[RMDB]
RNA sequence: GGGAACGACUCGAGUAGAGUCGAAAAAAGUGGAUGGUCCAAACUGCCACUGAUCAUGAUCGGGUAGCAAAUAUUCUGUAGUUGUAUCCGUUUCAGAAUGUCCUCCUAUUACGUAUAUAACAUUGUUUAUAGAUGCGAUUGCUGGAUUACAUCUAGGCAUUAAAGAAGCGUUCGCGCUUCUUUAAUGAAAAGAAACAACAACAACAAC
Reactivity to 2A3 in 0.01 (KOAc 150mM, MgCl2 10mM, bicine 150mM(pH8.5), 24C), signal-to-noise 3, nucleotides 027 to 156: a000a060g050u060g020g030a260u140g000g000u100c110c050a130a110a040c050u050g020c020c000a050c030u030g030a110u120c060a120u090g050a020u030c020g000g010g030u040a070g060c040a060a060a030u110a120u200u210c140u240g140u160a120g030u040u050g000u020a030u000c020c010g010u040u060u050c010a020g010a080a100u080g030u080c020c000u050c010c010u070a130u200u090a060c040g040u030a030u000a020u020a280a040c040a170u100u120g040u030u110u050a100u010a040g060a050u070g020c010g060a050u030u140g050c070u050g030g070a030u030u090a040c030a000u010c000u020a040g020g080
Reactivity to DMS in 0.01 (KOAc 150mM, MgCl2 10mM, bicine 150mM(pH8.5), 24C), signal-to-noise 3, nucleotides 027 to 156: a020a050g010u000g000g000a090u000g010g020u010c070c110a060a120a100c020u010g020c010c010a050c020u010g020a120u000c070a110u010g020a130u000c040g020g020g070u000a060g030c030a020a050a070u010a060u000u000c120u020g040u000a070g010u000u010g020u000a050u000c020c060g010u000u010u000c030a050g010a100a100u000g000u000c020c010u000c010c030u000a070u010u000a030c040g000u000a060u010a050u000a040a040c020a170u000u000g010u010u000u000a070u000a030g000a070u000g020c020g030a050u000u000g010c060u000g010g010a150u000u000a070c090a080u010c030u000a070g000g000